[RMDB]
This 177-nucleotide RNA was probed chemically with 2A3. The data come from the RNA Mapping Database (RMDB), library OK2TST.
RNA sequence: GGGAACGACUCGAGUAGAGUCGAAAAAGGCAUUAUGAGGCAUAUUUUGCGACUCGUGUGGCGACGUAAACGCUCAGUUAAAUAUAACUGCAAAAAAUAACACUUCUUACGCUCUAGCUGCCUAAAAGUCCAUUUGAGCUUUCGAGCUCAAAUGGACAAAAGAAACAACAACAACAAC
Reactivity to 2A3 in 0.01 (KOAc 150mM, MgCl2 10mM, bicine 150mM(pH8.5), 24C), signal-to-noise 1, nucleotides 027 to 126: a000g090g000c020a070u100u100a070u300g020a020g050g120c040a020u050a100u030u110u050u050g000c080g010a050c050u040c020g020u010g040u040g030g000c030g000a000c040g060u100a000a060a020c010g030c060u010c020a000g000u050u020a060a280a070u300a190u050a260a000c020u020g050c050a000a000a030a030a080a160u090a060a030c080a030c080u140u160c020u040u160a040c040g030c050u020c000u000a010g030c040u050g020c010c000u110a100a080a020a040

Source information:
For 2A3 the reverse transcriptase was SuperScript II with manganese. The reactions ran in a buffer of 150 mM KOAc, 10 mM MgCl2 and 150 mM bicine (pH 8.5), at 24 C.